[RMDB]
RNA sequence: GGGAACGACUCGAGUAGAGUCGAAAAGAUAUGGAUCACACUUCAGGACUAGCCGUUGAAAUCGGAAACGAUGGAGGCUAGGCCCUGAAAUGUGAUCCUAAGUCAAAGACCUUCUUCGGAAGGUCAAUCAUGAACUGGAGUUCGCUCCAGUUCAUGAAAAAGAAACAACAACAACAAC
Reactivity to DMS in 0.01 (KOAc 150mM, MgCl2 10mM, bicine 150mM(pH8.5), 24C), signal-to-noise 3, nucleotides 027 to 126: g000a020u010a300u020g000g000a010u000c000a020c000a010c040u000u020c010a000g010g000a300c000u000a010g040c000c000g000u000u010g000a080a160a020u000c000g000g000a140a130a170c010g000a010u000g000g000a080g000g000c010u000a000g010g000c150c000c000u000g000a000a000a010u000g010u000g000a000u000c000c000u000a000a050g010u000c020a100a120a110g000a030c000c000u000u000c000u000u000c210g020g000a020a010g010g000u000c010a020a050
Reactivity to 2A3 in 0.01 (KOAc 150mM, MgCl2 10mM, bicine 150mM(pH8.5), 24C), signal-to-noise 1, nucleotides 027 to 126: g010a030u090a040u200g000g010a000u000c000a010c010a000c030u000u000c020a030g020g010a000c010u010a000g030c000c010g250u230u090g000a040a010a010u000c010g050g030a110a050a010c010g020a020u020g030g040a000g000g000c000u000a000g010g000c000c020c000u000g000a000a000a000u000g000u020g000a000u010c000c000u000a010a000g040u000c020a070a110a000g020a000c000c000u000u020c000u030u060c250g170g000a050a000g000g000u020c010a000a010